[RMDB]
Chemical mapping of a 177-nucleotide RNA with 2A3 and DMS. The DMS profile rests on 9,374 reads. 2A3 adducts were read by reverse transcription with SuperScript II with manganese. For 2A3, 7,630 sequencing reads were counted.
RNA sequence: GGGAACGACUCGAGUAGAGUCGAAAAGGGUCGUGGACAGUCCACCAUAUGUGAAACAUUUGGACACCAUGGGACGUGGCAGCCCGAGAUCUCUGCGGGAGAUUCAUGAUGAGCGGCUCCAUCAAUAGGCUGCUUACUGCUUCGGCAGUGGGCAGCCAAAAGAAACAACAACAACAAC
Reactivity to 2A3 in 0.01 (KOAc 150mM, MgCl2 10mM, bicine 150mM(pH8.5), 24C), signal-to-noise 7, nucleotides 027 to 126: g080g010g020u040c000g030u030g010g040a080c040a060g020u000c000c010a010c020c030a080u040a030u150g080u040g150a200a110a030c040a050u080u060u120g010g010a030c020a050c050c020a030u080g030g000g040a010c040g030u040g010g020c060a010g020c000c010c000g020a030g000a010u000c020u000c020u040g070c180g080g120g000a020g000a000u040u070c040a050u170g050a020u030g020a000g010c010g000g010c010u000c010c000a030u050c010a020a060u050a150
Reactivity to DMS in 0.01 (KOAc 150mM, MgCl2 10mM, bicine 150mM(pH8.5), 24C), signal-to-noise 5, nucleotides 027 to 126: g000g000g000u000c010g040u010g000g000a070c110a140g020u000c000c020a170c210c050a070u020a020u030g020u050g010a220a080a300c020a060u010u010u020g010g010a100c080a120c150c100a080u020g000g000g020a030c040g030u010g030g030c040a070g000c010c010c030g020a110g020a020u010c000u020c000u000g030c110g020g020g000a030g000a020u000u010c100a150u030g000a050u020g000a130g000c050g000g000c040u010c030c000a040u010c060a090a110u020a120